[RMDB]
RNA sequence: GGGAACGACUCGAGUAGAGUCGAAAAUUCUUCGCAGGAGAUAAUGGGCUUAUUCUAAGAUGUGGAGGAACUCCAAGCUCCAGAAAAUGGUUAGAGAUUGACCAGUUAGCAUCAUUUGAUUUGGUUCCUCGUGUCAAUUGUUCGCAAUUGACACGAGAAAAGAAACAACAACAACAAC
Reactivity to 2A3 in 0.01 (KOAc 150mM, MgCl2 10mM, bicine 150mM(pH8.5), 24C), signal-to-noise 3, nucleotides 027 to 126: u040u000c000u070u080c060g020c100a080g040g050a020g010a040u130a130a160u140g040g040g010c000u030u090a060u210u060c070u090a060a040g070a150u060g070u050g080g030a020g030g070a050a060c020u060c040c000a030a000g100c000u000c030c000a000g100a010a140a060a010u020g040g000u020u000a060g000a080g030a230u140u180g030a040c000c020a000g030u060u210a000g010c000a030u040c040a130u060u000u080g130a190u100u050u040g110g000u030u040c020
Reactivity to DMS in 0.01 (KOAc 150mM, MgCl2 10mM, bicine 150mM(pH8.5), 24C), signal-to-noise 2, nucleotides 027 to 126: u020u010c020u000u030c080g010c070a100g010g030a030g000a140u010a000a060u010g000g030g010c100u010u000a090u030u010c040u000a050a040g000a030u090g040u050g000g000a040g000g000a020a060c130u000c010c020a040a060g010c020u020c030c060a090g010a050a070a020a060u000g000g020u000u000a050g000a210g010a120u020u030g030a010c000c000a030g010u040u050a190g010c070a020u020c040a100u050u010u010g000a000u000u000u000g000g000u040u000c030